[RMDB]
RNA sequence: GGGAACGACUCGAGUAGAGUCGAAAAUAUUCGUAUUAACAGCUACUCUAGGGGGAAUGUUUUUAUGCGGUGCUAACGAUUUAAUAACUAUCUUUGUAGCCCCAGAAUGUUUCAGUUUAUGCUCCUAUAUUCAGCAGUUAUUCGUAACUGCUGAAUAAAAAGAAACAACAACAACAAC
Reactivity to 2A3 in 0.01 (KOAc 150mM, MgCl2 10mM, bicine 150mM(pH8.5), 24C), signal-to-noise 7, nucleotides 027 to 126: u260a050u070u140c080g020u060a040u080u120a160a090c040a060g030c020u010a010c000u010c020u100a070g000g030g030g010g050a050a100u150g090u020u020u000u040u040a110u080g040c050g010g040u070g010c010u030a070a040c030g020a020u020u070u150a150a170u150a080a050c100u080a040u090c040u060u110u140g060u080a020g010c010c000c030c010a010g080a040a060u070g020u010u010u040c020a020g020u040u080u150a090u180g030c000u010c010c000u040a030
Reactivity to DMS in 0.01 (KOAc 150mM, MgCl2 10mM, bicine 150mM(pH8.5), 24C), signal-to-noise 6, nucleotides 027 to 126: u010a070u010u010c050g010u020a090u020u010a080a140c110a100g020c030u000a040c010u000c030u010a050g000g010g000g010g010a040a060u020g000u000u010u010u010u010a060u010g010c130g030g000u020g020c030u000a030a070c080g010a030u010u020u000a070a110u020a100a100c190u010a040u010c030u010u010u030g010u010a060g000c010c020c010c020a070g010a090a070u010g000u000u000u010c020a060g020u010u010u020a080u050g010c050u010c000c000u000a110